RNA sequence: GGGAACGACUCGAGUAGAGUCGAAAAAAAGAUAUGGACGUACAAAAGUUGUAUGCAAGGCAUGGCAGCUCGGAAACGAGCUGCCCGCUGCUGAUGACCAUACUCCGGACGUACGUCCUAAGUCAAAUCAACCUAUUAAGUUCGCUUAAUAGGUUGAAAAAGAAACAACAACAACAAC
Reactivity to 2A3 in 0.01 (KOAc 150mM, MgCl2 10mM, bicine 150mM(pH8.5), 24C), signal-to-noise 3, nucleotides 027 to 126: a000a000a000g030a020u070a040u120g000g000a010c000g000u000a000c020a010a180a020a030g010u040u010g020u020a010u020g040c070a090a260g020g000c000a000u150g010g010c000a020g020c010u010c050g080g000a090a120a070c040g010a020g020c030u010g020c010c000c000g010c010u010g010c010u030g060a300u100g020a010c030c010a000u000a010c010u020c020c010g030g040a030c080g000u010a000c020g010u010c000c000u010a020a000g010u010c010a000a010a170
Reactivity to DMS in 0.01 (KOAc 150mM, MgCl2 10mM, bicine 150mM(pH8.5), 24C), signal-to-noise 7, nucleotides 027 to 126: a070a060a110g000a040u000a300u010g000g000a020c000g000u010a010c000a020a080a250a220g000u000u000g010u000a030u000g000c010a070a090g000g010c010a000u000g000g020c010a010g040c000u000c000g020g000a080a050a240c010g030a030g020c010u010g000c000c000c020g000c030u000g000c000u000g000a050u010g010a120c300c000a000u000a010c000u000c050c010g000g010a300c240g000u000a010c010g010u000c000c000u000a010a070g000u000c040a040a100a100

Source: RMDB library TTRDES, as collected in RNAgym. Structure probing data (2A3 and DMS) for a 177-nucleotide construct. Conditions: 150 mM KOAc, 10 mM MgCl2 and 150 mM bicine (pH 8.5), 24 C. For DMS the reverse transcriptase was MarathonRT. The 2A3 profile rests on 8,699 reads. For DMS, 5,653 sequencing reads were counted.